Chemical mapping of a 177-nucleotide RNA with 2A3 and DMS. The DMS profile rests on 2,112 reads. The reactions ran in a buffer of 150 mM KOAc, 10 mM MgCl2 and 150 mM bicine (pH 8.5), at 24 C. Values cover nucleotides 27 to 126. For 2A3 the reverse transcriptase was SuperScript II with manganese.
RNA sequence: GGGAACGACUCGAGUAGAGUCGAAAAGAUAUGGAAUCCUUAGACAUGGUCUGGUGUCGGAAACGACACCUGACCAACAGCUAAGAGAUUCCUAAGUCAAAGCAUCACUCUGUUCGCAGAGUGAUGCCCCAGGCAUAUCGUUCGCGAUAUGCCUGGGAAAAGAAACAACAACAACAAC
Reactivity to 2A3 in 0.01 (KOAc 150mM, MgCl2 10mM, bicine 150mM(pH8.5), 24C), signal-to-noise 2, nucleotides 027 to 126: g010a000u020a000u080g000g010a020a000u020c000c020u020u010a010g030a050c150a300u300g000g000u010c000u010g000g010u000g010u000c000g000g020a020a000a010c010g010a000c000a040c000c000u000g000a000c000c000a010a000c010a010g000c000u010a010a000g180a100g010a010u010u000c000c000u000a000a000g010u000c000a080a130a080g010c010a000u020c000a000c020u000c010u010g100u160u140c300g020c150a000g000a000g010u020g010a000u000g000c020
Reactivity to DMS in 0.01 (KOAc 150mM, MgCl2 10mM, bicine 150mM(pH8.5), 24C), signal-to-noise 2, nucleotides 027 to 126: g000a000u000a040u010g000g000a000a000u010c000c000u010u010a010g000a020c020a300u020g050g030u000c010u000g000g000u000g020u000c000g000g000a000a020a040c010g020a000c010a010c000c000u000g010a030c000c000a070a000c120a120g020c000u020a010a020g000a190g010a020u000u010c000c000u010a000a120g000u000c010a110a110a170g010c000a010u000c000a010c000u000c000u000g000u010u010c160g060c040a000g000a030g020u000g010a000u000g000c000